[RMDB]
The record gives the reactivity of an RNA of 207 nucleotides to 2A3 and DMS. The reactions ran in a buffer of 150 mM KOAc, 10 mM MgCl2 and 150 mM bicine (pH 8.5), at 24 C. For DMS, 25,886 sequencing reads were counted. 2A3 adducts were read by reverse transcription with SuperScript II with manganese. It was measured as part of the RMDB library OK3TST.

RNA sequence: GGGAACGACUCGAGUAGAGUCGAAAAGGAGCUCGGCAUGCUCUAAAUCCUAGGUAGAGCAUGCGUACGCUCUACCUUACCACCGGAGCGUACUGAUGUGUCGGUGGUAUCGUGACACAUCAGUGAGGGCACGAUAGGAUAUUGCUCUUACCGAGCACGUGACCACUAUGUUCGCAUAGUGGUUGCGAAAAGAAACAACAACAACAAC
Reactivity to 2A3 in 0.01 (KOAc 150mM, MgCl2 10mM, bicine 150mM(pH8.5), 24C), signal-to-noise 9, nucleotides 027 to 156: g110g010a080g010c010u020c030g020g000c040a020u030g000c000u000c000u020a070a080a040u060c030c030u040a050g000g060u010a000g000a000g000c020a060u150g050c050g050u050a020c040g000c000u000c000u010a000c000c010u020u070a050c020c020a040c030c020g010g000a030g000c010g010u020a020c010u030g020a030u010g010u000g010u010c020g040g120u150g090g030u050a070u080c030g040u070g010a000c000a000c000a020u020c010a010g010u020g030a040g010g030g000c020a010c050g070a070u090a080g050g000a030u040a060u080u070g000c000u000c000u020u040a070c030c040g000a000g000c010a000
Reactivity to DMS in 0.01 (KOAc 150mM, MgCl2 10mM, bicine 150mM(pH8.5), 24C), signal-to-noise 5, nucleotides 027 to 156: g010g000a120g010c000u010c040g030g010c020a060u000g020c010u000c010u000a060a080a110u000c060c050u000a150g030g020u000a020g000a030g010c000a060u000g030c130g020u000a040c060g000c000u000c000u000a050c020c020u000u000a080c040c030a090c070c050g010g000a060g020c020g040u000a130c040u010g010a030u000g020u000g010u000c000g020g030u010g040g030u000a010u000c040g030u000g010a040c010a030c000a040u000c020a060g000u000g010a060g010g010g020c020a080c080g010a180u000a090g010g010a170u000a140u000u000g000c020u000c010u000u000a080c050c020g000a060g020c020a130